[RMDB]
RNA sequence: GGGAACGACUCGAGUAGAGUCGAAAAGAAGGUGUGUUCGCACACCUUCAAAUAGGUCAGACUAAAGCUUCCUGGAGUCAAGACCUGAAAACCAAAGGAGCAAAACCACCUACUUCGGUAGGUGGAACAUAAUGUAGACCUUCGGGUCUACAUUAUGAAAAGAAACAACAACAACAAC
Reactivity to 2A3 in 0.01 (KOAc 150mM, MgCl2 10mM, bicine 150mM(pH8.5), 24C), signal-to-noise 6, nucleotides 027 to 126: g000a000a000g000g000u000g000u000g010u040u110c160g070c060a000c000a010c000c000u000u000c000a010a000a000u160a010g010g000u020c020a010g010a030c010u070a100a050a040g010c010u170u080c020c010u030g050g020a010g020u020c050a120a080g010a010c000c000u020g030a070a080a010a010c030c020a070a090a050g010g000a010g010c020a000a000a030a110c000c000a000c000c000u010a000c000u030u050c190g100g000u000a000g010g000u010g000g000a000a000
Reactivity to DMS in 0.01 (KOAc 150mM, MgCl2 10mM, bicine 150mM(pH8.5), 24C), signal-to-noise 7, nucleotides 027 to 126: g010a010a000g010g020u000g030u000g010u000u010c220g040c010a010c000a010c000c000u000u000c000a020a060a060u010a040g000g010u000c000a170g010a020c000u000a040a030a080g000c030u000u000c010c010u000g000g000a030g000u000c010a080a160g000a010c000c000u000g000a050a050a100a120c030c020a030a040a030g000g000a040g010c060a130a070a090a180c000c000a010c000c000u000a000c000u000u010c180g030g010u000a010g000g020u000g000g000a010a060
Record summary: Structure probing data (2A3 and DMS) for a 177-nucleotide construct. The data come from the RNA Mapping Database (RMDB), library M2PK50. In probing experiments dimethyl sulfate is read out at A N1 and C N3, which are open when not base-paired. Reactivities are given for positions 27 through 126. The reactions ran in a buffer of 150 mM KOAc, 10 mM MgCl2 and 150 mM bicine (pH 8.5), at 24 C. The 2A3 profile rests on 19,590 reads.